[RMDB]
RNA sequence: GGGAACGACUCGAGUAGAGUCGAAAAAAUAAGAGUUUGGAUUAACCUAUAGGGAAUUAGCGAUCAAGAAUACAACCUAAGGUCCUGGUUGACUUAAUUAUUCCAUAGGUUGGUGGAAGCUAGCGAAUCCUCUCAUAAAGUUCGCUUUAUGAGAGGAAAAAGAAACAACAACAACAAC
Reactivity to DMS in 0.01 (KOAc 150mM, MgCl2 10mM, bicine 150mM(pH8.5), 24C), signal-to-noise 2, nucleotides 027 to 126: a080a050u010a080a100g000a020g020u000u000u000g000g010a080u000u000a020a020c000c000u000a020u010a240g010g010g010a020a010u000u000a020g000c020g010a010u000c010a010a030g000a040a060u010a110c120a070a170c150c130u010a060a080g040g000u000c010c030u000g000g010u000u000g000a090c010u010u010a010a010u000u010a040u010u010c010c010a030u000a010g010g010u000u000g010g020u000g000g020a060a050g000c040u000a060g030c160g020a090a170